This 177-nucleotide RNA was probed chemically with 2A3 and DMS. The RNA was probed in 150 mM KOAc, 10 mM MgCl2 and 150 mM bicine (pH 8.5) at 24 C. High DMS reactivity at an A or C suggests that its Watson-Crick edge is free. The DMS profile rests on 5,152 reads.
RNA sequence: GGGAACGACUCGAGUAGAGUCGAAAAGUAGUCGCGGCCUCCAGGGUGUUCCUGACGCUCUCAUUGUAUGAAGCUCGCGGCUGAUCGACGCCGGCCACCGACAGGCUAUGUAGAGUCGCAGCGGUCGCGAGCAUGCGUGAUUCGUCACGCAUGCUCGAAAAGAAACAACAACAACAAC
Reactivity to 2A3 in 0.01 (KOAc 150mM, MgCl2 10mM, bicine 150mM(pH8.5), 24C), signal-to-noise 3, nucleotides 027 to 126: g090u060a010g030u030c010g020c000g040g000c010c000u010c040c030a040g000g000g040u050g010u060u080c020c070u090g030a020c020g010c010u020c000u030c040a180u130u180g070u160a150u240g080a070a000g010c050u070c100g000c010g000g000c010u020g010a020u070c020g000a020c040g050c050c050g020g000c000c030a060c030c000g070a050c060a090g070g000c020u020a060u170g110u100a030g030a020g040u030c020g000c050a010g060c030g060g030u040c020g000
Reactivity to DMS in 0.01 (KOAc 150mM, MgCl2 10mM, bicine 150mM(pH8.5), 24C), signal-to-noise 4, nucleotides 027 to 126: g000u000a050g020u000c030g030c030g010g010c020c010u000c070c110a100g010g010g040u000g010u000u000c100c080u000g000a240c050g010c050u000c030u010c060a090u020u000g030u000a140u000g020a070a060g000c020u000c020g000c010g000g000c010u000g000a070u010c010g020a050c040g010c060c060g010g020c010c020a080c110c080g000a070c140a120g010g000c020u000a060u000g020u010a130g010a050g020u000c010g020c170a070g010c060g010g000u010c050g000